[RMDB]
RNA sequence: GGGAACGACUCGAGUAGAGUCGAAAACAGACCGCUGGGAGAAGACCCGCUAAAAAUAUUGCCUAUAAUCUUCUGAAGCGCGCACGGAAGGUAGGCAACAAAUAAAAGCGCUUCUCCUGUGCUGAAGCGCGCACGGCAACCGAAAGGUGCGAGGAAACCAUAAGUCUUGGUUCGCCAAGACUUAUGGAAAAGAAACAACAACAACAAC
Reactivity to 2A3 in 0.01 (KOAc 150mM, MgCl2 10mM, bicine 150mM(pH8.5), 24C), signal-to-noise 2, nucleotides 027 to 156: c020a020g190a070c030c000g000c020u040g010g000g010a010g020a010a010g050a140c140c180c050g030c050u140a130a130a030a020a050u140a080u060u010g000c020c000u190a190u080a300a140u060c020u000u010c000u000g040a210a070g000c010g010c000g000c000a010c000g010g010a000a010g030g000u060a020g010g000c000a010a010c030a010a140a030u280a100a140a000a010g000c010g000c000u000u010c000u010c000c010u000g000u000g010c000u020g010a100a040g000c000g000c010g000c010a000c000g010g020c000a040a000c030c000g040a060a010a050g000g000u010g010c010g000a100g010g120a080a090a050
Conditions: 150 mM KOAc, 10 mM MgCl2 and 150 mM bicine (pH 8.5), 24 C.
This 207-nucleotide RNA was probed chemically with 2A3.
The data come from the RNA Mapping Database (RMDB), library RNAMAK.